[RMDB]
RNA sequence: GGGAACGACUCGAGUAGAGUCGAAAAUACGCUUACGUACACUGUGGUGGAAGGUGAGCAGUACCGCUACAACGGGGUUACCAUUGUGGGUAACCAGAUUUUUAGCACCGAGGAGCUGCAGGCAAAAACGUCAUUAUUAGUUCGCUAAUAAUGACGUAAAAGAAACAACAACAACAAC
Reactivity to DMS in 0.01 (KOAc 150mM, MgCl2 10mM, bicine 150mM(pH8.5), 24C), signal-to-noise 9, nucleotides 027 to 126: u030a050c070g000c050u010u000a030c050g000u010a180c070a060c030u010g040u020g020g020u010g000g020a120a140g010g010u010g010a060g000c040a100g030u010a090c060c050g010c050u010a060c220a100a120c130g010g000g000g010u000u000a010c000c000a170u040u030g020u030g010g000g020u000a010a010c000c010a060g000a030u010u010u020u010u020a070g010c030a160c070c040g000a100g000g010a130g010c030u000g000c020a050g000g030c120a050a040a060a070
Reactivity to 2A3 in 0.01 (KOAc 150mM, MgCl2 10mM, bicine 150mM(pH8.5), 24C), signal-to-noise 9, nucleotides 027 to 126: u120a010c040g020c050u090u070a020c030g110u060a020c060a010c040u050g050u100g150g000u020g020g090a070a050g100g010u040g020a020g020c010a010g030u060a070c010c030g000c040u080a040c040a090a040c040g120g040g000g000u000u000a000c000c010a080u110u300g100u230g170g000g000u000a000a000c000c000a000g010a030u070u100u020u020u120a030g010c010a020c030c020g030a070g020g060a040g000c010u030g000c020a030g030g030c050a020a040a020a030